[RMDB]
RNA sequence: GGGAACGACUCGAGUAGAGUCGAAAAGAUAUGGACUGAGGGAGUUCCCGGAUCGGAAACGAUCCGUGGAACGAGGAUCUCAGGUCCUAAGUCAAAAGAAUCCACUCACUUCGGUGAGUGGAUUCAACAUAAUCCAGACGUUCGCGUCUGGAUUAUGAAAAGAAACAACAACAACAAC
Reactivity to DMS in 0.01 (KOAc 150mM, MgCl2 10mM, bicine 150mM(pH8.5), 24C), signal-to-noise 3, nucleotides 027 to 126: g010a050u010a300u000g000g020a180c010u000g000a020g010g000g010a060g020u000u000c010c000c010g010g000a010u000c010g000g000a060a110a120c010g010a010u000c010c010g000u030g010g000a000a010c000g000a060g020g000a030u000c000u000c010a020g030g010u000c000c010u010a040a180g010u010c040a110a090a150a160g000a010a000u000c000c000a010c010u000c000a000c000u000u010c170g030g010u000g000a020g020u000g000g000a000u000u000c000a060a160
Reactivity to 2A3 in 0.01 (KOAc 150mM, MgCl2 10mM, bicine 150mM(pH8.5), 24C), signal-to-noise 1, nucleotides 027 to 126: g000a000u090a040u150g000g000a010c000u020g000a020g000g000g000a020g000u010u020c030c010c000g040g000a010u010c000g000g050a060a050a030c010g000a000u020c010c000g050u280g000g020a010a000c020g010a050g020g020a000u000c000u020c000a000g110g110u090c010c010u040a170a030g050u040c020a000a010a110a200g010a000a020u000c000c000a000c000u020c000a000c010u080u140c300g150g000u020g000a000g000u000g000g000a010u010u000c000a000a000

The record gives the reactivity of an RNA of 177 nucleotides to DMS and 2A3. 2A3 adducts were read by reverse transcription with SuperScript II with manganese. For DMS, 2,722 sequencing reads were counted.